[RMDB]
RNA sequence: GGGAACGACUCGAGUAGAGUCGAAAAAUGCUUUUCGAAGCAUCGCAACCGUAGGAACACUAUAAUCCGUGUGUAGCACUCGCCUUUCGAAAGAGAGGAAACGUGCGCAGAUACACGGGUAGUGUUCCUAAACGGAUAGAUCGUCGUUCGCGACGAAAUCGGUCUAAGAUUUCGAUCUUAGACCGAUAAAAGAAACAACAACAACAAC
Reactivity to 2A3 in 0.01 (KOAc 150mM, MgCl2 10mM, bicine 150mM(pH8.5), 24C), signal-to-noise 4, nucleotides 027 to 156: a000u020g000c000u040u020u060u240c280g110a020a000g010c010a020u070c080g090c140a090a110c010c000g020u020a010g000g010a000a000c010a000c020u020a020u070a300a210u060c000c000g000u010g010u000g000u040a030g000c000a000c010u050c110g050c000c000u000u000u000c030g060a140a070a040g010a010g000a000g050g000a090a140a050c150g000u010g010c000g000c030a000g020a160u080a030c000a000c000g010g000g000u000a000g000u010g000u000u010c000c000u010a000a000a000c000g020g000a000u050a060g180a140u050c000g020u000c010g020u070u060c250g010c030g110a010c010g010a060a100
Reactivity to DMS in 0.01 (KOAc 150mM, MgCl2 10mM, bicine 150mM(pH8.5), 24C), signal-to-noise 2, nucleotides 027 to 156: a020u010g000c000u000u000u000u000c300g010a030a050g000c000a020u000c050g020c040a050a030c010c000g030u000a040g020g010a040a020c010a020c010u000a050u000a280a160u010c000c000g000u000g010u020g020u000a300g000c010a040c000u000c080g020c010c000u000u030u000c000g020a180a100a290g010a030g010a000g010g000a010a030a090c190g020u000g020c020g060c060a170g010a090u000a060c000a020c000g030g010g040u000a000g030u010g000u000u000c010c000u000a000a010a060c030g040g030a100u000a150g010a050u000c020g020u000c010g010u000u000c150g020c010g000a050c000g000a010a040
Description: Source: RMDB library RNAMAK, as collected in RNAgym. An RNA of 207 nucleotides, treated with 2A3 and DMS and read out base by base. For DMS, 4,605 sequencing reads were counted. The reactions ran in a buffer of 150 mM KOAc, 10 mM MgCl2 and 150 mM bicine (pH 8.5), at 24 C.